[RMDB]
RNA sequence: GGGAACGACUCGAGUAGAGUCGAAAAAGUAUUUGAAGCAGUACGAUGCAAUCGUCACGUCGUUAUCGCCUCGUAUCAGAAGCUUCGUUUUGCUGGAGGUUGAUACCAAUGAAAUUCAUGCCAGCAUGAAGAGGCGAGCUAUCAAAAAGAGAAACGCUAGCUUCUACCUGUUCGCAGGUAGAAGCUAAAAAGAAACAACAACAACAAC
Reactivity to 2A3 in 0.01 (KOAc 150mM, MgCl2 10mM, bicine 150mM(pH8.5), 24C), signal-to-noise 2, nucleotides 027 to 156: a000g150u120a130u010u080u080g010a060a000g000c020a000g040u040a000c000g000a050u050g010c070a050a090u070c060g120u060c050a020c150g090u040c030g030u120u020a090u040c020g000c000c000u000c010g020u070a030u130c100a100g070a140a010g040c000u060u060c020g040u100u110u010u050g020c000u000g010g060a170g040g300u010u020g010a030u040a100c040c130a090a090u140g060a110a010a020u070u030c000a000u030g010c000c000a000g000c010a010u030g010a010a000g000a000g000g000c040g000a010g010c000u020a070u230c040a040a040a000a050a000g110a000g050a070a090a000c040g040c090
Reactivity to DMS in 0.01 (KOAc 150mM, MgCl2 10mM, bicine 150mM(pH8.5), 24C), signal-to-noise 1, nucleotides 027 to 156: a160g010u000a020u000u010u020g020a050a010g080c000a110g060u000a030c030g040a080u000g020c020a070a090u010c090g000u020c130a130c060g000u000c000g020u020u000a050u000c000g020c000c000u020c020g000u010a120u020c050a170g010a100a210g050c030u020u000c000g000u020u000u020u000g090c010u010g010g020a090g010g010u020u000g000a130u000a200c180c100a090a170u000g000a030a090a120u000u000c010a020u000g000c000c020a120g000c000a120u000g020a060a030g000a050g000g060c000g020a050g010c040u030a020u000c110a040a050a030a090a130g000a170g020a090a050a060c020g000c030